Chemical mapping of a 177-nucleotide RNA with 2A3 and DMS. The data come from the RNA Mapping Database (RMDB), library OK1LIB.

RNA sequence: GGGAACGACUCGAGUAGAGUCGAAAAGAGGCCGCUGUCUUGCCUCUAGAGCAAUCUGACAGCUGCACUGGUGCUGGCGUGCGAAUGCCCUGGCAACGAGAACGUAUAUUGGCAGAGAGGCGAAGGAACUCCCUAGCCUAUUCGUAGGCUAGGGAGUAAAAGAAACAACAACAACAAC
Reactivity to 2A3 in 0.01 (KOAc 150mM, MgCl2 10mM, bicine 150mM(pH8.5), 24C), signal-to-noise 3, nucleotides 027 to 126: g100a040g080g000c010c000g040c070u040g030u010c040u020u080g000c000c000u060c070u070a020g020a010g060c020a010a090u170c150u160g030a010c020a000g000c010u010g020c020a020c160u040g000g040u070g050c020u030g010g020c040g040u110g030c020g100a130a020u190g000c010c020c030u020g040g000c030a060a040c060g010a030g030a130a020c000g020u060a070u020a020u190u130g050g000c040a020g010a000g000a040g120g000c030g040a040a060g050g000a020
Reactivity to DMS in 0.01 (KOAc 150mM, MgCl2 10mM, bicine 150mM(pH8.5), 24C), signal-to-noise 3, nucleotides 027 to 126: g020a080g000g010c000c100g050c080u000g000u000c020u030u010g000c000c010u040c150u020a050g000a200g000c040a020a060u030c100u020g000a030c050a070g010c040u000g020c040a100c050u000g030g010u000g000c020u000g020g010c070g010u030g000c000g030a150a070u030g000c000c040c060u010g000g010c060a030a070c080g010a060g020a080a090c100g010u020a030u060a140u040u010g010g010c060a000g000a110g010a070g010g040c040g000a070a130g010g000a140
The reactions ran in a buffer of 150 mM KOAc, 10 mM MgCl2 and 150 mM bicine (pH 8.5), at 24 C. DMS adducts were read by reverse transcription with MarathonRT.